[RMDB]
RNA sequence: GGGAACGACUCGAGUAGAGUCGAAAAUAGGGGAGACCGAAGCGAGGAGGAAAGCAAAGAAAGCAACGGGGCUAGCCGGUGGGUGUUCCUCCCCCCGAGAGGGGAAGAGUGAGGCUUAUCCCGGGGACACUAAUUAUACCUUCGGGUAUAAUUAGUGAAAAGAAACAACAACAACAAC
Reactivity to DMS in 0.01 (KOAc 150mM, MgCl2 10mM, bicine 150mM(pH8.5), 24C), signal-to-noise 3, nucleotides 027 to 126: u010a100g010g000g000g010a080g020a070c080c020g010a080a110g010c100g010a070g020g010a060g010g010a030a060a080g020c070a080a090a120g010a080a070a090g000c070a080a110c090g010g000g000g000c080u020a070g020c040c020g000g020u000g010g000g020u010g000u000u000c010c010u000c010c030c000c000c000c040g010a120g000a110g000g000g000g000a030a050g010a060g010u000g010a110g000g010c050u000u000a070u000c010c000c010g000g000g000g010a300
Reactivity to 2A3 in 0.01 (KOAc 150mM, MgCl2 10mM, bicine 150mM(pH8.5), 24C), signal-to-noise 2, nucleotides 027 to 126: u120a010g000g000g020g010a080g030a040c020c060g010a020a010g050c040g020a030g010g020a020g000g020a110a010a000g010c030a040a050a150g070a050a110a000g010c010a010a080c020g010g000g000g020c030u030a030g020c030c000g020g010u050g030g030g010u060g030u040u020c010c000u030c000c010c000c000c000c000g060a050g030a020g050g020g000g000a000a040g030a000g020u130g020a030g000g010c000u030u030a050u030c000c000c020g000g010g010g010a000
An RNA of 177 nucleotides, treated with DMS and 2A3 and read out base by base. The reactions ran in a buffer of 150 mM KOAc, 10 mM MgCl2 and 150 mM bicine (pH 8.5), at 24 C. The 2A3 profile rests on 2,806 reads. The DMS profile rests on 3,069 reads.